[RMDB]
The record gives the reactivity of an RNA of 177 nucleotides to DMS.
Values cover nucleotides 27 to 126.
Source: RMDB library OK2TRN, as collected in RNAgym.
The RNA was probed in 150 mM KOAc, 10 mM MgCl2 and 150 mM bicine (pH 8.5) at 24 C.
The DMS profile rests on 1,323 reads.
For DMS the reverse transcriptase was MarathonRT.
RNA sequence: GGGAACGACUCGAGUAGAGUCGAAAAUGCUGCUGUGGCGGCCGGAGCUCAACACCCCUGCAUUCUUCCUGGGAGAUGAUGCCAGAGUACAGUGCAGCAGUAGUACUGGGGGGCAGGAGACUCAGGGAGACAUGUACUCCUUCGGGAGUACAUGUCUAAAAGAAACAACAACAACAAC
Reactivity to DMS in 0.01 (KOAc 150mM, MgCl2 10mM, bicine 150mM(pH8.5), 24C), signal-to-noise 1, nucleotides 027 to 126: u000g000c000u010g000c010u000g040u000g010g020c100g050g000c050c020g030g000a090g000c030u000c050a070a170c150a180c030c040c000c000u030g050c090a080u000u020c030u000u010c020c040u010g010g010g000a060g040a090u010g000a110u000g030c030c060a130g020a100g020u000a040c040a140g000u010g010c010a040g000c040a050g010u010a060g010u000a040c010u000g000g000g010g010g010g010c110a080g000g010a120g010a180c050u000c010a020g000g000g000